[RMDB]
RNA sequence: GGGAACGACUCGAGUAGAGUCGAAAAAUAAAGACAUAUCUGAGGCUAAUUACAAAGAAAAGAGGUUUAAUUGACUCACAGUUCCACUUGGCUGGGGAGGCCUCACAAUCAUGGUGGAAGGCAAAGGAGGAGCAAAGUCGUGUCUUAUAUGGCGGCAACGUGAGGAUUUAUUCGUAAAUCCUCACGUAAAAGAAACAACAACAACAAC
Reactivity to DMS in 0.01 (KOAc 150mM, MgCl2 10mM, bicine 150mM(pH8.5), 24C), signal-to-noise 1, nucleotides 027 to 156: a140u010a060a090a180g010a080c090a060u000a000u000c050u010g030a050g010g070c030u000a050a040u010u000a200c060a070a080a100g010a050a010a000a110g010a020g010g010u020u010u010a090a080u000u000g010a050c010u010c010a040c090a100g000u000u020c000c030a070c070u010u000g030g000c040u010g000g010g030g000a090g080g030c190c030u000c060a020c090a050a080u000c030a120u010g000g010u000g010g010a100a050g010g010c070a050a070a010g020g030a050g000g020a040g000c020a040a020a070g040u000c020g030u010g010u010c010u000u000a120u000a080u010g020g000c000g010g030c030a080
Reactivity to 2A3 in 0.01 (KOAc 150mM, MgCl2 10mM, bicine 150mM(pH8.5), 24C), signal-to-noise 2, nucleotides 027 to 156: a000u120a020a050a010g050a020c030a050u140a030u040c040u060g000a000g000g010c000u000a040a040u110u040a080c070a070a170a010g100a050a070a020a020g040a040g050g060u070u160u120a080a100u060u110g060a010c010u040c060a070c020a060g030u070u000c030c000a040c020u100u150g060g000c040u030g000g080g030g000a020g020g010c000c000u030c000a020c010a000a050u140c080a050u120g060g000u010g020g040a060a020g000g020c010a040a060a030g000g000a030g030g030a020g000c000a030a090a000g010u040c030g020u020g030u000c020u030u120a110u010a040u160g080g000c030g020g000c040a030
The record gives the reactivity of an RNA of 207 nucleotides to DMS and 2A3.
For DMS the reverse transcriptase was MarathonRT.
For 2A3, 1,096 sequencing reads were counted.
The data come from the RNA Mapping Database (RMDB), library OK3TST.
2A3 adducts were read by reverse transcription with SuperScript II with manganese.